[RMDB]
Chemical mapping of a 177-nucleotide RNA with 2A3 and DMS. Reactivities are given for positions 27 through 126. For DMS the reverse transcriptase was MarathonRT. The data come from the RNA Mapping Database (RMDB), library OK2TRN. For 2A3, 5,601 sequencing reads were counted.
RNA sequence: GGGAACGACUCGAGUAGAGUCGAAAACACUUGACUGCUUUCUGACCUUGGCGUAGGCUAUUCCGAGUGCAAUGUGGCUGAAUUCUUUGCAUCGGUCACUGGAGAUGUCGCCGACGGUAUGGUGUCGGCCCUCACCUGUAUUCGUACAGGUGAGGGCAAAAGAAACAACAACAACAAC
Reactivity to 2A3 in 0.01 (KOAc 150mM, MgCl2 10mM, bicine 150mM(pH8.5), 24C), signal-to-noise 5, nucleotides 027 to 126: c030a000c030u070u160g070a030c020u050g070c020u050u090u070c020u070g080a060c010c020u020u040g050g010c020g040u050a050g080g000c000u040a050u120u030c020c000g050a080g120u140g050c050a020a090u140g010u020g050g010c040u020g010a140a090u200u080c080u120u190u190g030c030a050u030c030g020g000u020c000a000c040u030g020g040a150g010a100u110g070u140c070g000c020c000g000a030c020g050g180u100a070u140g060g000u060g020u050c030g060
Reactivity to DMS in 0.01 (KOAc 150mM, MgCl2 10mM, bicine 150mM(pH8.5), 24C), signal-to-noise 3, nucleotides 027 to 126: c070a100c100u010u020g000a050c100u010g000c070u000u000u010c040u010g010a070c050c030u000u000g020g010c040g000u000a070g010g010c040u000a120u000u000c010c010g000a140g050u000g020c130a070a080u010g010u000g010g000c040u010g010a040a110u020u000c130u000u000u010g010c150a100u000c000g010g010u010c020a030c040u000g000g000a070g000a090u010g010u000c150g010c020c010g010a030c050g010g010u000a050u000g000g000u000g010u000c050g020